[RMDB]
RNA sequence: GGGAACGACUCGAGUAGAGUCGAAAAUGACUGAUGUUUUCUGAUGAUUAGACUGGGAUUAAGGGUUUCUGGAAAGAAGAGCACAGGCAUUGUUCUGACAUCACAUCAUCACAUUGUAUCAGGGGUACAUGAUAUCCACAUGAUACCUCUGGAAAUACAUUACGGUACGAUUCGUCGUACCGUAAUGAAAAGAAACAACAACAACAAC
Reactivity to DMS in 0.01 (KOAc 150mM, MgCl2 10mM, bicine 150mM(pH8.5), 24C), signal-to-noise 3, nucleotides 027 to 156: u010g010a130c070u010g030a030u000g010u000u000u000u000c040u010g010a090u000g020a130u000u000a050g020a110c030u000g020g010g020a120u000u000a090a140g010g010g030u000u000u000c010u010g030g000a100a130a110g030a040a030g000a090g020c040a050c070a050g010g010c060a110u000u010g010u000u000c030u000g010a080c030a090u000c040a070c080a070u000c030a080u010c070a040c060a120u000u020g000u000a130u010c020a020g010g010g000g040u000a000c010a020u010g020a180u000a120u010c070c200a160c010a040u000g000a120u000a000c000c010u000c010u020g010g000a040a060a090u000a110
Reactivity to 2A3 in 0.01 (KOAc 150mM, MgCl2 10mM, bicine 150mM(pH8.5), 24C), signal-to-noise 7, nucleotides 027 to 156: u110g030a030c050u010g010a030u050g070u060u070u030u050c060u070g070a080u020g030a050u040u060a030g010a030c020u040g010g050g030a070u100u150a070a080g070g040g050u070u100u020c040u050g030g110a120a080a030g060a060a010g020a020g020c030a020c020a060g030g030c040a060u020u090g040u090u030c010u030g030a020c010a040u070c030a020c010a050u060c010a020u060c010a030c010a110u090u140g090u110a110u120c000a000g000g000g020g000u000a010c000a000u010g030a030u050a070u150c070c010a040c000a030u020g060a120u000a010c000c000u000c000u000g000g010a000a050a000u140a020

Structure probing data (DMS and 2A3) for a 207-nucleotide construct. For 2A3 the reverse transcriptase was SuperScript II with manganese. For DMS the reverse transcriptase was MarathonRT.